[RMDB]
RNA sequence: GGGAACGACUCGAGUAGAGUCGAAAAGUCGCACGAGUGCAGCGACAUUUUAGGUUGGUAACUCCGGAUCAACCGUACUCGUCAUCUCGGAAUGCCAUUUUGAGAUGAAUGGUAUUCCAACCGGAGAGGGUUGCAAGAUCUUCGGAUCUUGCAACCCAAAAGAAACAACAACAACAAC
Reactivity to 2A3 in 0.01 (KOAc 150mM, MgCl2 10mM, bicine 150mM(pH8.5), 24C), signal-to-noise 2, nucleotides 027 to 126: g000u000c000g030c020a010c050g050a120g080u120g010c070a000g010c040g030a010c000a020u070u080u140u210a030g000g010u000u000g020g000u000a040a030c010u000c000c000g010g000a000u000c000a000a000c000c010g000u040a040c020u020c050g160u130c140a220u040c100u030c070g020g020a010a000u010g030c000c000a010u000u010u050u090g300a300g000a090u170g020a000a000u000g000g000u000a000u010u020c010c000a040a000c010c000g010g000a000g000a000
The record gives the reactivity of an RNA of 177 nucleotides to 2A3. Values cover nucleotides 27 to 126. 2A3 is a SHAPE reagent: it acylates the 2'-hydroxyl of flexible nucleotides of all four kinds.